[RMDB]
Source: RMDB library OK2TST, as collected in RNAgym. An RNA of 177 nucleotides, treated with DMS and read out base by base.
RNA sequence: GGGAACGACUCGAGUAGAGUCGAAAAUGGAGAUUGUUGAGACCGAAAACGGGAAGCUCUAUCUGCCUACAGAGCAACUAGUGGAGGAAACUGAGAAGUACUUCACUGGUGAAGAGAAACCAAAAUAUAAAUACGCCAGUUUCGACUGGCGUAUUUAAAAAGAAACAACAACAACAAC
Reactivity to DMS in 0.01 (KOAc 150mM, MgCl2 10mM, bicine 150mM(pH8.5), 24C), signal-to-noise 1, nucleotides 027 to 126: u000g010g020a180g000a250u010u000g000u010u000g000a070g000a300c010c040g000a110a040a060a080c170g030g030g000a150a080g010c000u000c020u000a130u010c050u000g000c050c010u000a090c200a120g020a110g030c020a160a050c000u000a020g070u000g000g000a000g030g000a190a070a090c040u010g030a170g010a040a090g020u000a120c000u000u030c000a000c000u000g010g000u000g000a070a300g000a060g000a110a100a210c050c040a040a050a080a040u010a160
For DMS, 609 sequencing reads were counted. For DMS the reverse transcriptase was MarathonRT.